Structure probing data (DMS and 2A3) for a 177-nucleotide construct. The RNA was probed in 150 mM KOAc, 10 mM MgCl2 and 150 mM bicine (pH 8.5) at 24 C. For DMS the reverse transcriptase was MarathonRT.
RNA sequence: GGGAACGACUCGAGUAGAGUCGAAAAGAUAUGGAGGUCCCAUGUGGGAGCUCAAGCUUCGGAAACGAAGCUCGAGCAUCGAUCACACUAGGGACCUCCUAAGUCAAAAUCGCUGCUUCGGCAGCGACGCUAUGUACAGCUUCGGCUGUACAUAGCGAAAAGAAACAACAACAACAAC
Reactivity to DMS in 0.01 (KOAc 150mM, MgCl2 10mM, bicine 150mM(pH8.5), 24C), signal-to-noise 1, nucleotides 027 to 126: g030a060u000a300u010g000g010a040g020g000u000c000c000c010a300u010g010u000g000g030g030a040g000c000u000c010a000a030g020c010u010u020c000g030g000a090a130a170c000g010a010a000g000c000u000c010g000a010g010c000a240u000c250g040a170u020c070a070c000a010c120u000a300g010g030g010a010c000c010u010c000c010u000a000a150g010u010c040a090a120a060a210u000c000g010c000u000g000c000u010u010c170g050g040c010a040g010c000g000a000
Reactivity to 2A3 in 0.01 (KOAc 150mM, MgCl2 10mM, bicine 150mM(pH8.5), 24C), signal-to-noise 1, nucleotides 027 to 126: g000a010u060a060u180g000g000a010g000g030u000c000c050c040a040u020g000u020g030g110g040a130g000c010u040c030a020a000g000c020u030u020c010g060g030a110a060a020c010g000a000a000g000c010u010c020g000a010g030c030a270u300c060g030a040u090c040a020c030a030c160u250a280g000g070g050a000c000c000u000c000c000u000a020a000g010u000c000a000a020a060a300u040c020g000c030u000g000c010u010u100c220g110g000c000a010g000c020g010a000